[RMDB]
RNA sequence: GGGAACGACUCGAGUAGAGUCGAAAAGGGACGGAAGUGGGUGGGACCCACCAGGCCCGCGGGCGAACCCGACCCAUGUUCGUCUGUCGCUUCGAGCGAGCGGACGACGUCGCCGCGCUACAGGAAGUGAUCCUCGUACAUUCGUGUACGAGGAUCAAAAAGAAACAACAACAACAAC
Reactivity to DMS in 0.01 (KOAc 150mM, MgCl2 10mM, bicine 150mM(pH8.5), 24C), signal-to-noise 2, nucleotides 027 to 126: g000g000g000a170c060g000g000a070a090g000u030g000g020g000u050g000g000g020a120c080c000c000a030c000c060a080g000g020c020c050c010g050c100g010g000g000c040g000a030a000c060c070c040g040a140c000c000c030a020u000g000u000u000c010g000u000c000u050g010u010c000g020c030u000u050c140g000a070g060c000g000a060g000c000g000g000a020c010g010a040c040g000u000c030g030c030c000g010c040g020c030u010a100c120a090g000g030a130a090g030
Reactivity to 2A3 in 0.01 (KOAc 150mM, MgCl2 10mM, bicine 150mM(pH8.5), 24C), signal-to-noise 3, nucleotides 027 to 126: g000g000g010a030c110g040g070a140a040g050u270g060g010g080u300g070g030g000a040c010c010c000a030c030c010a020g070g000c020c000c010g020c020g020g000g040c030g000a040a050c000c020c020g030a150c000c000c050a040u090g050u020u010c020g000u000c030u070g040u020c000g020c020u050u140c190g100a130g020c000g010a090g120c030g040g020a020c030g000a010c020g000u010c010g010c010c000g050c020g000c020u040a080c100a090g010g070a140a030g010